[RMDB]
RNA sequence: GGGAACGACUCGAGUAGAGUCGAAAAAGGCCUUUAUCUGCACAAAUCAGGGUAGAAUGAGGCAGGCAGUUCCAGGAUUGGCUGAUUCGGAAACUGGCUAGACAAAUCCAUCUCAGCUACCAUUGUCCACAAAAAAGGGGGACCUCUGGAAAUCCAAAUCCACGUAUGGAUUCGUCCAUACGUGGAUAAAAGAAACAACAACAACAAC
Reactivity to 2A3 in 0.01 (KOAc 150mM, MgCl2 10mM, bicine 150mM(pH8.5), 24C), signal-to-noise 1, nucleotides 027 to 156: a000g040g020c000c000u040u020u070a170u090c020u000g090c040a040c040a100a130a210u220c170a220g040g020g010u020a010g010a010a070u070g000a010g020g000c010a020g020g000c010a010g010u000u050c010c010a070g000g030a020u070u060g010g000c010u030g010a010u050u050c020g010g030a070a040a040c070u040g070g000c040u040a000g040a120c120a010a080a040u050c020c010a050u080c030u010c040a000g000c000u020a080c000c010a010u030u080g010u000c000c010a040c030a060a050a020a190a080a190g100g080g010g000g000a010c000c000u000c010u020g090g000a090a130a020u030c050c050a000a170
Structure probing data (2A3) for a 207-nucleotide construct. Values cover nucleotides 27 to 156. 2A3 is a SHAPE reagent: it acylates the 2'-hydroxyl of flexible nucleotides of all four kinds. 2A3 adducts were read by reverse transcription with SuperScript II with manganese. It was measured as part of the RMDB library OK3TST. The RNA was probed in 150 mM KOAc, 10 mM MgCl2 and 150 mM bicine (pH 8.5) at 24 C.